[RMDB]
RNA sequence: GGGAACGACUCGAGUAGAGUCGAAAAUUUCUCAAAAACAGCGUAAUGACCUGGGAGAGAACAACGAUAACAAUGAACCAUUCCCAUGAGUGUUGCCUGGCAAUAUUUGUGGGGAUUUUUUGAUUAUUGCUGUGUAAACAUUCGUGUUUACACAGCAAAAAGAAACAACAACAACAAC
Reactivity to DMS in 0.01 (KOAc 150mM, MgCl2 10mM, bicine 150mM(pH8.5), 24C), signal-to-noise 2, nucleotides 027 to 126: u030u040u010c000u010c010a020a050a080a080a140c030a080g000c050g000u000a050a010u030g000a080c230c020u000g050g000g050a140g000a070g000a050a080c180a030a140c100g010a070u020a020a080c150a060a010u000g000a050a050c130c080a050u000u030c010c010c010a020u000g000a010g010u000g000u000u000g000c000c100u040g040g000c000a000a000u030a000u000u000u000g000u020g020g000g000g000a000u000u000u000u010u010u000g000a120u010u010a030u030
Reactivity to 2A3 in 0.01 (KOAc 150mM, MgCl2 10mM, bicine 150mM(pH8.5), 24C), signal-to-noise 3, nucleotides 027 to 126: u020u030u010c000u000c000a050a050a060a000a000c020a020g000c000g030u030a150a120u140g060a070c000c020u010g020g050g010a100g000a000g050a100a020c060a100a020c070g060a020u110a170a010c070a140a120u160g100a080a010c080c000a010u010u010c000c000c000a000u010g010a020g000u030g030u000u020g000c100c300u150g160g000c010a000a000u000a000u000u000u000g000u000g000g000g000g040a000u030u000u000u000u050u060g100a080u030u130a020u030